[RMDB]
RNA sequence: GGGAACGACUCGAGUAGAGUCGAAAAAUACACUGCACGUGCGUGCGAGCAGUUUACGAAAUAAUCGUACGUACGUAAAGACCCAACUCUACUCGAUGCGAGGGUCAGCAAAGUCGUUCCCAUAUAAGAUUACGGUUAUGUUCGCAUAACCGUAAUCAAAAGAAACAACAACAACAAC
Reactivity to DMS in 0.01 (KOAc 150mM, MgCl2 10mM, bicine 150mM(pH8.5), 24C), signal-to-noise 2, nucleotides 027 to 126: a060u000a070c100a130c130u040g000c300a060c010g000u000g010c020g010u000g010c000g000a040g000c140a130g000u000u000u000a180c180g000a080a070a070u000a050a110u000c000g040u000a020c020g020u000a000c020g030u000a010a200a040g020a100c050c050c020a100a010c000u000c010u000a020c000u000c000g000a090u000g020c020g000a100g000g000g000u000c070a180g000c020a060a140a020g040u000c000g020u000u000c000c020c000a000u000a000u000a090a190
Reactivity to 2A3 in 0.01 (KOAc 150mM, MgCl2 10mM, bicine 150mM(pH8.5), 24C), signal-to-noise 5, nucleotides 027 to 126: a000u170a010c060a010c110u150g040c080a010c010g000u000g010c000g000u000g010c010g000a020g010c190a040g020u100u110u140a220c230g130a080a040a060u130a040a050u040c000g000u000a000c000g000u010a000c000g010u010a010a000a000g010a000c020c010c000a000a020c000u000c000u010a000c000u010c000g030a020u050g010c000g000a150g020g010g060u040c020a010g010c040a100a300a030g000u010c030g010u000u000c000c010c000a000u000a000u000a010a010
An RNA of 177 nucleotides, treated with DMS and 2A3 and read out base by base.
High DMS reactivity at an A or C suggests that its Watson-Crick edge is free.
2A3 adducts were read by reverse transcription with SuperScript II with manganese.
The RNA was probed in 150 mM KOAc, 10 mM MgCl2 and 150 mM bicine (pH 8.5) at 24 C.
It was measured as part of the RMDB library M2PK90.
The 2A3 profile rests on 7,486 reads.